Source: RMDB library M2RFPK, as collected in RNAgym. Chemical mapping of a 207-nucleotide RNA with 2A3.
RNA sequence: GGGAACGACUCGAGUAGAGUCGAAAACCAGAUGACGGUCCUGCCAUGAGACCGCAACGAGAGCAUGUCGCAUCGAAUGGACUCGGGGAGUCGGCAGCUUGCCCCACGGACGAGCGCCUAAUGCCGGAAGAGACGUGCAACUUCGGUUGCACGUCAAGCGUGUUUAACGAUUCGUCGUUAAACACGCAAAAGAAACAACAACAACAAC
Reactivity to 2A3 in 0.01 (KOAc 150mM, MgCl2 10mM, bicine 150mM(pH8.5), 24C), signal-to-noise 1, nucleotides 027 to 156: c000c000a010g060a190u190g060a190c020g000g000u000c030c030u100g120c120c040a300u230g040a070g000a120c010c010g020c000a050a060c040g050a000g000a010g110c000a070u080g050u040c030g000c040a090u040c000g050a030a050u050g030g000a070c030u040c100g040g000g030g000a030g060u140c080g020g020c000a050g070c010u090u100g010c000c000c000c010a060c110g000g060a020c030g000a010g000c050g000c000c020u050a100a040u070g050c030c030g060g020a030a020g110a040g000a040c000g010u020g000c010a030a030c010u080u080c090g080g010u000u000g000c000a060c000g000u000c000a000a000
2A3 adducts were read by reverse transcription with SuperScript II with manganese.